RNA sequence: GGGAACGACUCGAGUAGAGUCGAAAAGAUAUGGAUUUGGGAGCUUUUGACGGGCCAUCGGAAACGAUGGAUCCGAUAAGCUUAGAAUCCUAAGUCAAAGCAGAGAGCUCUUCGGAGCUCUCUGCAACCCUAUAUAAGGGUUCGCCCUUAUAUAGGGAAAAGAAACAACAACAACAAC
Reactivity to DMS in 0.01 (KOAc 150mM, MgCl2 10mM, bicine 150mM(pH8.5), 24C), signal-to-noise 3, nucleotides 027 to 126: g000a030u010a300u000g010g000a010u000u010u000g010g010g020a010g010c010u000u010u000u010g020a210c200g000g000g000c010c000a000u000c000g020g000a110a070a110c010g010a020u000g000g000a040u000c000c000g010a080u000a010a020g010c000u010u000a300g000a020a010u000c000c000u000a030a160g010u010c030a060a100a150g010c000a000g000a010g000a010g000c000u000c020u000u000c210g030g000a020g020c000u000c010u000c000u000g010c000a010a020
Reactivity to 2A3 in 0.01 (KOAc 150mM, MgCl2 10mM, bicine 150mM(pH8.5), 24C), signal-to-noise 4, nucleotides 027 to 126: g020a010u100a030u150g030g000a060u040u050u050g300g300g040a010g000c010u140u150u210u300g220a130c030g000g000g030c000c000a000u000c000g010g010a050a040a020c010g010a000u010g000g020a040u030c000c000g000a010u030a050a010g000c000u000u000a010g020a000a000u000c000c010u010a110a030g040u020c030a120a070a040g000c000a000g010a020g020a060g010c020u000c050u180u270c300g050g000a000g030c000u020c000u020c000u010g000c000a000a010